[RMDB]
About this RNA
An RNA of 207 nucleotides, treated with 2A3 and DMS and read out base by base. For 2A3, 3,306 sequencing reads were counted. Reactivities are given for positions 27 through 156. For DMS, 2,416 sequencing reads were counted. For 2A3 the reverse transcriptase was SuperScript II with manganese. Source: RMDB library RNAMAK, as collected in RNAgym.
RNA sequence: GGGAACGACUCGAGUAGAGUCGAAAACGCUGGGAGGAAUGUAAUCAAGUAUGUAGACAUGCCUACCACUGAAGCGCGCACGGUGGCAAGGCAACAGCUACAUACUUGAUUACCGCUUCCUCCUGUGCUGAAGCGCGCACGGCAACCGAAAGGUGCGGUAUGUGCUACGCUUCGGCGUAGCACAUACAAAAGAAACAACAACAACAAC
Reactivity to 2A3 in 0.01 (KOAc 150mM, MgCl2 10mM, bicine 150mM(pH8.5), 24C), signal-to-noise 3, nucleotides 027 to 156: c070g000c010u030g000g020g010a010g030g020a020a010u300g010u000a000a000u000c000a000a000g010u000a000u010g000u000a000g100a110c060a150u050g000c000c000u010a000c000c000a000c010u030g060a250a070g060c040g000c010g010c090a020c080g020g000u010g020g030c230a220a040g000g000c010a040a020c100a130g020c000u000a000c000a000u000a000c000u000u020g000a000u010u000a000c000c000g000c000u000u000c000c000u000c000c000u000g000u030g010c020u060g020a080a040g030c040g000c000g000c020a000c000g050g010c030a090a090c040c020g110a160a040a040g040g000u020g020c030g020
Reactivity to DMS in 0.01 (KOAc 150mM, MgCl2 10mM, bicine 150mM(pH8.5), 24C), signal-to-noise 1, nucleotides 027 to 156: c050g020c000u010g000g020g020a030g000g000a130a040u000g000u000a000a010u010c000a000a110g020u000a020u000g020u000a030g000a100c070a300u010g020c000c000u010a040c010c000a020c000u000g010a040a080g020c090g040c030g020c000a300c000g040g050u000g030g020c000a060a040g010g000c010a000a020c180a180g020c000u000a010c000a000u000a010c020u010u030g000a010u010u000a010c020c020g030c060u010u000c020c000u000c000c010u020g000u010g000c050u070g000a130a070g020c050g070c060g000c000a130c050g000g010c020a100a200c040c050g000a050a140a080g020g010u010g010c040g050

The RNA was probed in 150 mM KOAc, 10 mM MgCl2 and 150 mM bicine (pH 8.5) at 24 C.